[RMDB]
RNA sequence: GGGAACGACUCGAGUAGAGUCGAAAACGCAUGACGCUGAGCACAAACGCUUGAGCGACUUCAACCGCAGCACGCUAGAAAUGCUGCAAGACCUGAUGCCUGGCGAGCAGUUCGCCAUCGUGCCGCGUGCGACACUGAUGUUCGCAUCAGUGUCGCAAAAAGAAACAACAACAACAAC
Reactivity to 2A3 in 0.01 (KOAc 150mM, MgCl2 10mM, bicine 150mM(pH8.5), 24C), signal-to-noise 2, nucleotides 027 to 126: c020g040c070a090u130g000a010c010g060c020u030g000a000g050c020a080c160a160a300a030c150g010c040u070u140g190a050g050c000g020a020c010u070u050c070a120a070c010c040g040c000a050g000c010a000c040g040c040u090a070g080a100a110a020u120g040c040u020g000c000a000a020g050a030c050c000u050g060a060u200g080c010c080u040g000g040c010g000a050g000c050a080g060u080u030c020g000c010c010a020u090c030g020u020g020c050c030g060c020g060
Reactivity to DMS in 0.01 (KOAc 150mM, MgCl2 10mM, bicine 150mM(pH8.5), 24C), signal-to-noise 2, nucleotides 027 to 126: c090g010c110a050u000g030a080c020g030c010u000g010a010g040c000a110c120a080a100a150c220g010c030u000u000g000a020g020c020g000a160c070u000u020c140a100a210c160c050g000c000a050g010c040a020c060g000c130u020a040g000a050a090a060u000g010c000u000g000c000a020a060g000a100c030c070u010g000a070u000g000c050c020u010g020g020c000g000a050g000c130a080g000u000u000c070g000c040c030a000u000c040g010u020g000c000c080g000c100g000